[RMDB]
RNA sequence: GGGAACGACUCGAGUAGAGUCGAAAAAGCAUUUUUUACCUUCUCCCUGCUACUUCUUGCUACUAGUAACAUGGAUGUGAGCCUUGGAGGGGUAGCUACCAUCUGGCACCUGGGGUGGCAAGCCAACAUGGAAAGGAUGGCAGAGCGGGAAGGAGGAUAGAAGACUGUGGUUCGCCACAGUCUUCUAAAAAGAAACAACAACAACAAC
Reactivity to 2A3 in 0.01 (KOAc 150mM, MgCl2 10mM, bicine 150mM(pH8.5), 24C), signal-to-noise 1, nucleotides 027 to 156: a010g110c080a100u060u000u040u070u100u220a120c000c000u000u030c000u040c030c010c010u020g000c000u060a110c050u060u000c050u050u020g060c010u000a110c030u000a110g050u130a100a060c020a090u070g030g000a050u030g020u060g050a060g090c000c010u080u050g050g110a130g000g130g000g000u000a020g030c000u060a090c000c000a010u000c010u030g000g030c070a100c010c000u060g000g000g010g010u020g000g050c010a020a020g000c010c030a040a040c010a080u040g010g070a150a040a030g010g020a040u050g020g020c020a000g090a030g060c000g040g000g010a020a010g010g000a000g020g010a040
This 207-nucleotide RNA was probed chemically with 2A3. 2A3 adducts were read by reverse transcription with SuperScript II with manganese. Reactivities are given for positions 27 through 156. Conditions: 150 mM KOAc, 10 mM MgCl2 and 150 mM bicine (pH 8.5), 24 C.